The record gives the reactivity of an RNA of 207 nucleotides to DMS and 2A3. 2A3 adducts were read by reverse transcription with SuperScript II with manganese. The reactions ran in a buffer of 150 mM KOAc, 10 mM MgCl2 and 150 mM bicine (pH 8.5), at 24 C. Source: RMDB library PDB130, as collected in RNAgym. For DMS the reverse transcriptase was MarathonRT. For 2A3, 4,973 sequencing reads were counted.

RNA sequence: GGGAACGACUCGAGUAGAGUCGAAAAGUAAAUCGUUGACUAUACUCAACAAACCACAAAGACAUCGGCACCCUGUACCUACUAUUUGGUGCCUGAGCAGGAAUAGUGGGCACUGCCUUGAGCCUACUAAUUCGCGCUGAACUAGGUCAGCCCGGAAGUUUUACUAAGACUUCGGUCUUAGUAAAACAAAAGAAACAACAACAACAAC
Reactivity to DMS in 0.01 (KOAc 150mM, MgCl2 10mM, bicine 150mM(pH8.5), 24C), signal-to-noise 2, nucleotides 027 to 156: g000u000a070a090a070u000c070g000u000u000g020a030c070u010a130u010a060c060u010c020a060a070c040a080a140a150c010c040a160c060a110a130a120g000a070c040a120u010c070g030g040c000a060c020c010c050u000g000u000a040c090c080u000a080c110u010a060u000u010u000g010g010u000g010c000c010u000g030a020g040c010a050g010g010a060a050u000a060g030u000g030g030g030c000a160c080u010g030c090c080u000u000g000a110g000c000c010u000a070c020u000a040a090u000u000c000g010c080g070c070u000g030a030a140c100u000a080g010g000u000c030a060g020c030c040c020g010g010a100a130
Reactivity to 2A3 in 0.01 (KOAc 150mM, MgCl2 10mM, bicine 150mM(pH8.5), 24C), signal-to-noise 3, nucleotides 027 to 156: g050u060a020a070a120u150c080g010u010u030g010a020c040u090a120u160a290c040u050c020a030a010c040a040a090a040c020c050a070c070a100a140a020g070a060c030a090u080c070g000g000c000a010c000c010c020u040g050u100a080c020c020u080a080c020u080a120u140u080u090g010g000u000g000c000c000u030g010a030g010c030a030g040g040a040a050u020a010g000u020g000g000g000c010a030c110u130g060c040c000u060u110g030a020g020c010c010u010a010c000u020a050a150u030u030c040g000c010g000c100u010g010a060a050c060u030a080g130g000u000c000a000g000c000c040c020g030g030a160a060